[RMDB]
RNA sequence: GGGAACGACUCGAGUAGAGUCGAAAAACUGAGAUAACCACAACCCGGCAUAUUAGUCUGCGGAAUCCAUUGACAUUGAACCAUGGAUAGUCAGUCGCGGUUGAGGUUAAGGAUUAUUUCCGAACCAACUAGUAAUAGUAUUCGUACUAUUACUAGUAAAAGAAACAACAACAACAAC
Reactivity to DMS in 0.01 (KOAc 150mM, MgCl2 10mM, bicine 150mM(pH8.5), 24C), signal-to-noise 9, nucleotides 027 to 126: a080c160u000g000a300g000a060u000a010a010c000c000a120c020a020a020c010c010c000g010g000c020a090u000a070u000u000a060g020u000c030u000g000c080g000g000a100a050u000c030c030a030u000u010g020a090c150a140u000u000g000a090a120c060c020a030u000g000g000a020u000a040g010u000c110a090g010u000c010g010c140g020g010u000u000g010a040g000g000u000u000a020a030g000g000a150u000u000a080u000u000u000c010c010g010a090a110c170c130a080
Reactivity to 2A3 in 0.01 (KOAc 150mM, MgCl2 10mM, bicine 150mM(pH8.5), 24C), signal-to-noise 7, nucleotides 027 to 126: a000c020u020g010a030g010a070u030a020a000c000c000a010c000a010a000c000c000c000g010g000c030a020u060a070u180u100a070g110u000c020u040g010c020g070g040a060a050u000c020c010a030u030u090g060a040c040a060u060u160g050a060a010c020c000a010u010g000g000a000u010a010g050u070c040a000g000u000c000g040c100g020g000u000u010g010a030g010g000u000u000a010a000g010g000a010u030u020a040u030u130u000c000c000g000a030a030c020c010a020